Structure probing data (2A3 and DMS) for a 177-nucleotide construct. For 2A3, 4,241 sequencing reads were counted. It was measured as part of the RMDB library OK2TST. For DMS the reverse transcriptase was MarathonRT.
RNA sequence: GGGAACGACUCGAGUAGAGUCGAAAAAGAUACGGCAUCAAUUGCGCGCCGAACGUGCCGAAUAAUCUUUCAAUGCCAGCACGAAGUUUCGGGACACCAGCCGGUGGCGCCUCAUAAGUGCCGUGCACGUAUGCAUCGUCUUCGGACGAUGCAUACGAAAAGAAACAACAACAACAAC
Reactivity to 2A3 in 0.01 (KOAc 150mM, MgCl2 10mM, bicine 150mM(pH8.5), 24C), signal-to-noise 4, nucleotides 027 to 126: a000g100a070u100a050c000g000g000c000a030u030c040a100a180u090u110g000c020g000c010g000c030c010g020a020a010c040g020u040g050c000c010g000a020a040u210a080a030u050c040u040u170u060c100a100a080u140g070c060c010a030g020c050a020c110g040a050a020g020u020u040u010c010g000g030g030a010c010a010c030c050a020g140c040c020g040g000u040g170g000c000g000c000c020u110c050a130u160a140a040g010u000g000c020c000g000u010g000c030a010
Reactivity to DMS in 0.01 (KOAc 150mM, MgCl2 10mM, bicine 150mM(pH8.5), 24C), signal-to-noise 4, nucleotides 027 to 126: a040g010a100u010a030c020g010g010c000a030u000c120a070a110u000u000g010c190g020c010g020c020c010g000a080a090c180g000u000g020c010c020g000a050a060u020a110a090u010c080u000u000u000c070a130a110u020g000c060c060a070g010c040a050c170g000a050a070g010u000u000u000c030g010g010g000a090c010a040c070c110a190g000c180c020g000g010u000g020g010c010g000c020c140u000c150a030u000a100a130g010u000g010c000c010g010u000g020c110a140